Source information
Source: RMDB library OK3TST, as collected in RNAgym. An RNA of 207 nucleotides, treated with 2A3 and DMS and read out base by base. The RNA was probed in 150 mM KOAc, 10 mM MgCl2 and 150 mM bicine (pH 8.5) at 24 C. Reactivities are rounded to 0.1 and cut off at 0 and 3. For 2A3, 1,933 sequencing reads were counted. Values cover nucleotides 27 to 156.
RNA sequence: GGGAACGACUCGAGUAGAGUCGAAAAGAAGACCCUUUCGCUGGAGGCCAAGAGGCUGGAGAACCAGGCGAAAGCCCUUGACUACCAGGCCAAGUUGACUGGGAACAGUGCGCUUAAGGCCCAGGCUGAUGCGAUCCGGCAGAAGAAGGAAGAGCUGCCACCAUACCUAAUUCGUUAGGUAUGGUGGAAAAGAAACAACAACAACAAC
Reactivity to 2A3 in 0.01 (KOAc 150mM, MgCl2 10mM, bicine 150mM(pH8.5), 24C), signal-to-noise 2, nucleotides 027 to 156: g100a040a010g090a040c020c000c000u020u050u010c070g010c030u030g020g020a030g000g000c010c000a060a010g050a150g080g000c020u010g020g020a070g020a080a090c060c030a030g030g020c030g000a040a020a010g000c000c000c000u040u010g020a010c010u040a140c020c010a050g010g030c020c030a070a020g030u090u150g140a050c020u000g000g030g000a000a080c010a040g010u090g060c070g010c020u080u050a110a060g020g010c000c010c020a050g000g040c020u040g030a060u070g010c020g060a040u020c050c000g030g000c040a060g010a090a000g010a060a050g050g040a050a020g020a020g060c050u140g040
Reactivity to DMS in 0.01 (KOAc 150mM, MgCl2 10mM, bicine 150mM(pH8.5), 24C), signal-to-noise 2, nucleotides 027 to 156: g020a110a110g000a190c010c010c020u000u000u000c030g000c040u000g020g000a300g000g000c050c020a050a090g020a170g040g020c010u020g060g020a300g000a090a130c020c080a160g030g020c010g010a160a080a130g010c000c010c040u000u000g000a120c000u000a160c020c010a090g050g020c040c000a060a170g020u000u000g000a040c050u010g010g020g000a010a100c000a070g000u000g030c060g070c030u000u010a060a120g000g030c010c000c000a100g020g020c000u000g010a080u030g020c030g000a080u000c060c080g000g000c000a110g010a040a060g000a080a090g000g010a080a040g000a070g010c030u000g020